Annotation: This 177-nucleotide RNA was probed chemically with 2A3 and DMS.

RNA sequence: GGGAACGACUCGAGUAGAGUCGAAAAAGGUGUGUCCGUGUGGCAUCGGAGAGUGAUGCUCCGGGAGUACAGCGUGAGAAUGAGGAUCGCCAGUGGAUCUGGACUCAAGUUCUUCCACUGUCAUCAAUCAACUCAACCGGUUCGCUGGUUGGGUUGAAAAAGAAACAACAACAACAAC
Reactivity to 2A3 in 0.01 (KOAc 150mM, MgCl2 10mM, bicine 150mM(pH8.5), 24C), signal-to-noise 9, nucleotides 027 to 126: a000g080g020u040g000u010g020u010c010c010g060u080g060u120g090g000c000a020u020c020g060g040a120g010a020g110u210g060a020u040g010c010u000c010c000g010g020g010a050g030u060a030c010a020g020c030g040u080g030a060g040a010a050u110g010a030g040g040a030u040c070g010c020c000a000g000u030g060g020a060u060c110u130g000g010a010c010u040c170a100a110g020u020u000c000u020u000c000c000a010c010u000g010u010c010a020u030c010a000a080
Reactivity to DMS in 0.01 (KOAc 150mM, MgCl2 10mM, bicine 150mM(pH8.5), 24C), signal-to-noise 9, nucleotides 027 to 126: a080g000g010u010g010u020g000u010c010c020g020u020g020u020g010g010c010a040u010c010g010g010a120g010a170g010u040g010a040u020g000c000u000c020c010g000g000g010a100g010u020a040c060a040g000c050g020u010g000a070g010a020a060u020g000a160g010g000a050u010c130g000c050c000a020g010u010g000g000a060u040c090u000g000g000a040c050u020c170a090a210g000u000u000c010u010u000c040c010a030c010u000g000u000c040a070u010c060a080a150